[RMDB]
RNA sequence: GGGAACGACUCGAGUAGAGUCGAAAAGACACUCUUUGCAGAUGACCUCCUCGUUGGUGCGUGUCGGUAAUGUUGUCAGUCACAGGCAACAGUUAACGAUCUGCUUAAAUAAAAAGAGAAGAACAAAGGUCACUAUGAUGUUCGCAUCAUAGUGACCAAAAGAAACAACAACAACAAC
Reactivity to 2A3 in 0.01 (KOAc 150mM, MgCl2 10mM, bicine 150mM(pH8.5), 24C), signal-to-noise 3, nucleotides 027 to 126: g040a040c000a030c040u000c000u000u160u030g000c010a020g000a050u000g000a040c000c000u060c020c000u180c050g130u070u300g190g010u300g020c010g070u040g000u000c050g000g030u070a060a030u080g000u020u000g000u010c010a050g200u230c050a060c040a120g010g000c000a000a000c000a010g020u010u110a020a000c020g020a030u000c000u000g000c000u010u080a150a150a080u080a020a100a020a000a000g130a020g040a170a010g030a050a040c050a050a090a000
Reactivity to DMS in 0.01 (KOAc 150mM, MgCl2 10mM, bicine 150mM(pH8.5), 24C), signal-to-noise 2, nucleotides 027 to 126: g000a090c180a000c000u030c000u040u000u020g010c100a030g000a030u000g000a030c060c020u030c000c020u010c090g010u060u000g010g010u030g010c100g030u030g030u000c000g000g070u020a080a110u020g030u040u000g000u000c010a080g000u010c250a170c170a080g000g000c000a070a090c020a060g060u040u020a080a020c060g000a000u000c020u000g000c020u020u060a080a090a070u010a080a170a000a010a020g010a050g000a080a180g000a150a090c160a010a090a050